[RMDB]
An RNA of 177 nucleotides, treated with DMS and 2A3 and read out base by base. High DMS reactivity at an A or C suggests that its Watson-Crick edge is free. 2A3 adducts were read by reverse transcription with SuperScript II with manganese. Reactivities are given for positions 27 through 126. For DMS, 87,620 sequencing reads were counted.

RNA sequence: GGGAACGACUCGAGUAGAGUCGAAAACGGCUAAAAGGCGUAUCGGGGAAACGCAAACGUAUGAGCGGAAAACGCGCCCCGAUGCGCAGGAGUUUGACGCUUAACAUGAUCUGUCAGGGAUCCCCGGGCUGGGAGUUCCAUUCGUGGAGCUCUCGGUAAAAGAAACAACAACAACAAC
Reactivity to DMS in 0.01 (KOAc 150mM, MgCl2 10mM, bicine 150mM(pH8.5), 24C), signal-to-noise 9, nucleotides 027 to 126: c110g000g010c030u020a070a050a080a090g010g010c000g010u000a010u000c000g010g000g000g000a080a050a100c140g000c070a140a060a070c040g010u000a130u050g010a160g010c000g000g000a070a040a080a110c230g010c150g000c000c000c000c010g000a000u000g010c000g020c000a010g000g010a080g010u000u000u000g010a110c130g000c030u000u010a080a100c130a080u020g010a050u010c020u010g000u020c140a090g000g000g000a060u000c000c000c000c020g010g010
Reactivity to 2A3 in 0.01 (KOAc 150mM, MgCl2 10mM, bicine 150mM(pH8.5), 24C), signal-to-noise 9, nucleotides 027 to 126: c010g030g000c030u070a050a030a050a060g160g000c000g000u010a010u010c000g000g000g000g030a030a050a030c060g000c000a040a040a010c020g060u130a120u300g120a130g100c010g010g030a080a150a040a070c080g000c000g010c000c000c000c000g000a010u000g000c000g000c000a000g000g010a090g020u050u100u130g040a030c040g010c010u040u060a070a020c030a120u140g020a060u050c020u060g180u210c090a090g070g020g030a030u020c000c000c000c010g010g070